[RMDB]
RNA sequence: GGGAACGACUCGAGUAGAGUCGAAAAGUUAAGCCGGUCUCUUCGGCAGAUUCGACGCCCAGUUCGGUUUGCGCGACGACAUCCAAACCAAAAUCGGCCAGCAAGGUUGCCAGCUCGCGCACUUUGCGAUAUCAUUGCACUUCGGUGCAAUGAUAUCAAAAGAAACAACAACAACAAC
Reactivity to 2A3 in 0.01 (KOAc 150mM, MgCl2 10mM, bicine 150mM(pH8.5), 24C), signal-to-noise 3, nucleotides 027 to 126: g020u020u070a110a000g000c020c000g070g040u050c130u030c000u220u140c020g000g000c010a000g040a060u190u170c030g030a020c020g040c000c040c000a000g030u100u150c050g050g030u020u080u090g000c040g000c000g010a030c020g010a020c020a030u040c030c010a080a070a090c050c000a050a030a020a140u070c040g030g020c030c020a010g010c030a100a060g010g020u070u020g030c010c020a050g010c070u100c060g040c020g010c020a020c030u070u040u070g040c030
Reactivity to DMS in 0.01 (KOAc 150mM, MgCl2 10mM, bicine 150mM(pH8.5), 24C), signal-to-noise 4, nucleotides 027 to 126: g010u010u010a080a130g010c020c020g000g000u010c070u000c070u010u000c040g000g030c030a060g000a090u020u000c050g000a060c110g000c050c020c040a150g010u000u010c090g010g000u010u000u010g020c050g000c030g010a060c050g000a040c090a060u010c030c010a060a080a120c090c090a030a020a070a070u000c060g020g010c020c100a100g010c070a050a070g000g010u000u000g010c000c000a090g030c130u000c070g010c060g010c020a080c100u000u000u000g000c170